[RMDB]
RNA sequence: GGGAACGACUCGAGUAGAGUCGAAAAGAUAUGGAGAGUGAACUACGAGGUGAACCAGCAACAGCGACAGUCUCGUCGGAAACGACGAGACUGUCGACAUGCUGAAACCCUCGCACUCUCCUAAGUCGUUAAUGAAGCUGUUCGCAGCUUCAUUAACAAAAGAAACAACAACAACAAC
Reactivity to DMS in 0.01 (KOAc 150mM, MgCl2 10mM, bicine 150mM(pH8.5), 24C), signal-to-noise 1, nucleotides 027 to 126: g020a090u000a300u020g000g010a050g000a000g000u000g000a100a140c180u010a300c000g000a000g010g000u000g020a110a300c300c000a020g000c010a040a070c300a190g020c010g020a000c000a000g020u000c000u000c000g040u050c000g000g010a070a170a200c010g000a000c030g000a030g000a000c000u000g000u000c000g000a020c210a070u010g000c000u000g000a010a120a050c150c000c000u000c020g000c000a020c000u000c000u010c040c000u000a020a010g000u010c190
The record gives the reactivity of an RNA of 177 nucleotides to DMS. The reactions ran in a buffer of 150 mM KOAc, 10 mM MgCl2 and 150 mM bicine (pH 8.5), at 24 C. The DMS profile rests on 655 reads. Reactivities are given for positions 27 through 126. For DMS the reverse transcriptase was MarathonRT.